[RMDB]
RNA sequence: GGGAACGACUCGAGUAGAGUCGAAAAUGCUGACUACAAAUGAUAGGCUUUUUCCUGGUCAGUUUAUAUAAGUAUCAGUUUGCUUACAGGUUGACAUAGUAAUUGAAUUAGAUAAUACUGGCAAAGGAGCUGACAUGCCAGGAGUUUAAAUAACGAAUCACCACUAAUCAUUCGUGAUUAGUGGUGAAAAAGAAACAACAACAACAAC
Reactivity to DMS in 0.01 (KOAc 150mM, MgCl2 10mM, bicine 150mM(pH8.5), 24C), signal-to-noise 2, nucleotides 027 to 156: u000g020c000u000g030a110c050u000a300c040a100a080a110u000g020a160u010a130g010g010c040u000u000u000u010u000c000c020u000g030g020u000c020a030g000u000u000u010a050u000a060u000a090a070g010u000a080u000c020a170g020u000u000u000g050c030u010u000a090c050a060g020g040u000u010g000a120c080a080u010a100g020u000a040a050u000u010g020a080a190u000u000a070g010a110u000a020a120u020a100c010u000g030g000c010a030a080a120g000g010a110g000c060u000g000a060c020a160u000g010c010c040a020g010g010a080g020u000u000u000a030a040a120u000a050a090c090g000a080a170
Reactivity to 2A3 in 0.01 (KOAc 150mM, MgCl2 10mM, bicine 150mM(pH8.5), 24C), signal-to-noise 2, nucleotides 027 to 156: u120g020c010u010g030a030c030u080a020c090a100a050a130u240g050a110u100a020g020g000c000u100u020u090u200u060c000c020u000g030g010u000c000a010g000u000u120u030a110u000a010u030a010a110g040u030a040u070c040a020g010u010u050u050g060c000u060u040a080c000a070g050g090u120u050g110a010c010a030u130a070g010u120a120a050u080u020g040a040a080u100u010a100g010a000u030a070a020u020a110c000u020g000g010c000a000a050a100g080g000a000g000c020u020g060a000c010a020u080g020c010c000a010g030g000a000g000u000u080u020a100a170a090u090a070a000c040g050a060a070
This 207-nucleotide RNA was probed chemically with DMS and 2A3.
It was measured as part of the RMDB library OK3TST.
2A3 adducts were read by reverse transcription with SuperScript II with manganese.
For DMS, 3,568 sequencing reads were counted.
The reactions ran in a buffer of 150 mM KOAc, 10 mM MgCl2 and 150 mM bicine (pH 8.5), at 24 C.
For DMS the reverse transcriptase was MarathonRT.
Reactivities are given for positions 27 through 156.